[RMDB]
RNA sequence: GGGAACGACUCGAGUAGAGUCGAAAAUGGUUCAACGCUGACAAAGGCUUCGGCUUCAUCACUCCUGACGAUGGCUCUAAAGAUGUGUUCGUACACUUCUCUGCUAUCCAGAACGAUGGUUACAAAUGACUAAUAGAACUUUCGAGUUCUAUUAGUCAAAAGAAACAACAACAACAAC
Reactivity to 2A3 in 0.01 (KOAc 150mM, MgCl2 10mM, bicine 150mM(pH8.5), 24C), signal-to-noise 9, nucleotides 027 to 126: u100g030g020u080u060c030a070a020c070g000c050u040g040a080c070a060a180a040g040g010c000u050u060c040g050g000c000u070u040c020a040u030c000a010c040u030c010c010u020g020a030c050g030a040u050g020g010c020u020c040u150a130a140a010g040a050u060g020u010g010u060u190c120g050u140a010c010a010c000u050u030c040u000c010u040g000c000u010a020u020c010c010a020g010a060a010c050g020a050u050g010g060u100u080a050c050a050a080a070u080
Reactivity to DMS in 0.01 (KOAc 150mM, MgCl2 10mM, bicine 150mM(pH8.5), 24C), signal-to-noise 7, nucleotides 027 to 126: u010g010g000u000u000c050a050a080c140g010c060u010g010a050c100a070a130a090g010g010c040u000u010c090g000g000c030u000u010c040a040u000c030a130c150u000c060c020u000g000a090c170g000a060u010g000g000c000u010c130u020a070a130a050g010a050u010g010u000g010u000u020c220g000u020a070c050a030c020u000u000c020u000c070u010g000c010u000a020u000c010c050a060g000a080a090c140g010a040u000g010g010u010u010a070c180a060a080a110u020